Structure probing data (2A3) for a 207-nucleotide construct.
RNA sequence: GGGAACGACUCGAGUAGAGUCGAAAACAGGCUUCAGGCAGAGGCAGACGCAGACCUCAUCUCAGUGCCCUAACCAAGUUCACCUGUGUUUCCUCCCAGGUGCCAACUUCACCCUGCGGGAGCUGGGGCUGGAAGAAGUAACGCCCCCUCACGGGAAGAUCAUACUGCGUUUCGACGCAGUAUGAUCAAAAGAAACAACAACAACAAC
Reactivity to 2A3 in 0.01 (KOAc 150mM, MgCl2 10mM, bicine 150mM(pH8.5), 24C), signal-to-noise 2, nucleotides 027 to 156: c030a020g060g000c040u160u120c080a040g030g070c030a020g000a050g030g000c040a030g060a180c090g010c120a030g020a260c090c000u090c040a140u090c050u010c030a070g040u060g100c000c000c040u050a030a030c040c060a120a000g020u020u010c010a020c000c010u000g010u020g030u030u120u140c010c060u040c010c000c000a020g020g010u010g030c010c030a040a030c030u150u080c080a110c020c010c000u060g010c060g050g040g000a010g070c060u080g010g010g000g020c010u040g080g070a080a100g010a080a020g090u080a090a050c040g030c030c010c000c000c010u040c010a040c050g010g000g010a000a050

Description:
Reactivities are given for positions 27 through 156. The RNA was probed in 150 mM KOAc, 10 mM MgCl2 and 150 mM bicine (pH 8.5) at 24 C. It was measured as part of the RMDB library OK3TST. The 2A3 profile rests on 1,073 reads.